[RMDB]
RNA sequence: GGGAACGACUCGAGUAGAGUCGAAAAUGUAGAGAAUUUGGUUCCAUUUAUCACCUACAGGGAUCAACAGUAUACCUCCAGGCUUUAGCUGGUCUACUAAAGGUCUUGGCAUAUCUGGGGCAGCGGCCCCUCUAGUGAGAUUCGUCUCACUAGAGGGAAAAGAAACAACAACAACAAC
Reactivity to 2A3 in 0.01 (KOAc 150mM, MgCl2 10mM, bicine 150mM(pH8.5), 24C), signal-to-noise 9, nucleotides 027 to 126: u090g010u070a040g020a020g040a220a140u070u080u100g040g010u030u020c020c000a020u060u110u050a140u080c040a050c030c010u080a060c070a070g030g010g000a030u040c020a020a060c010a040g080u080a040u040a170c010c010u020c020c020a040g080g000c060u100u110u120a030g020c020u050g040g040u040c020u060a070c020u040a040a080a060g020g010u000c020u070u080g050g000c020a050u040a020u110c050u050g010g000g020g000c000a020g050c020g080g040c010
Reactivity to DMS in 0.01 (KOAc 150mM, MgCl2 10mM, bicine 150mM(pH8.5), 24C), signal-to-noise 9, nucleotides 027 to 126: u000g010u000a060g010a110g010a090a130u000u000u000g010g010u000u000c030c010a100u010u000u000a060u010c070a150c060c020u000a050c110a070g010g000g000a050u000c040a050a130c160a070g010u000a060u000a060c050c030u000c050c050a060g010g010c100u000u000u000a040g010c030u000g000g010u000c060u000a110c040u000a030a080a080g010g010u000c030u000u000g010g010c160a060u000a040u000c060u000g010g010g000g010c040a080g020c100g000g010c140
Annotation:
The record gives the reactivity of an RNA of 177 nucleotides to 2A3 and DMS. The RNA was probed in 150 mM KOAc, 10 mM MgCl2 and 150 mM bicine (pH 8.5) at 24 C. For 2A3 the reverse transcriptase was SuperScript II with manganese. The data come from the RNA Mapping Database (RMDB), library OK2TST.